[RMDB]
RNA sequence: GGGAACGACUCGAGUAGAGUCGAAAAUCCGACUCUCAUAGGCUCUCCAACCCAACUCCUACUCAAUACGUCCUCGUCGUACAGAACGGUAACAUGUUUUCCGAACAUCCGCGCUUGGGUAUACAAGAAAGGCGUAGAUUAUUCGUAAUCUACGCAAUGGUUAUCACUAUUUCGAUAGUGAUAACCAAAAAGAAACAACAACAACAAC
Reactivity to DMS in 0.01 (KOAc 150mM, MgCl2 10mM, bicine 150mM(pH8.5), 24C), signal-to-noise 3, nucleotides 027 to 156: u010c020c000g000a060c010u000c020u010c000a150u000a120g020g000c010u000c010u000c020c060a090a120c020c010c020a090a080c020u000c020c020u000a070c050u000c020a090a100u000a090c050g010u000c030c010u010c010g010u000c060g010u000a110c040a070g020a070a120c060g000g020u010a060a140c090a100u010g020u010u000u000u000c070c040g000a040a050c000a110u000c040c030g020c030g010c040u000u000g030g010g030u000a070u010a080c030a050a090g020a090a080a120g020g020c010g020u000a000g000a030u000u000a060u000u010c250g030u000a020a020u000c000u000a000c000g040c000a010a020
Reactivity to 2A3 in 0.01 (KOAc 150mM, MgCl2 10mM, bicine 150mM(pH8.5), 24C), signal-to-noise 3, nucleotides 027 to 156: u060c020c010g010a030c020u030c000u020c060a100u010a120g090g000c010u010c000u000c040c010a060a100c010c020c020a020a060c010u020c030c010u010a030c000u010c040a050a050u060a090c050g060u070c010c040u010c000g090u020c020g040u050a020c040a060g090a180a050c000g040g020u070a070a040c020a080u110g060u020u060u100u060c010c020g010a050a030c020a070u020c020c040g040c030g030c090u030u090g000g010g040u090a090u040a090c050a040a090g090a150a060a020g130g000c000g000u010a000g010a010u000u010a020u000u060c030g020u020a010a000u020c000u000a000c000g000c000a000a000

Conditions: 150 mM KOAc, 10 mM MgCl2 and 150 mM bicine (pH 8.5), 24 C. Chemical mapping of a 207-nucleotide RNA with DMS and 2A3. For 2A3 the reverse transcriptase was SuperScript II with manganese. It was measured as part of the RMDB library M2RFPK.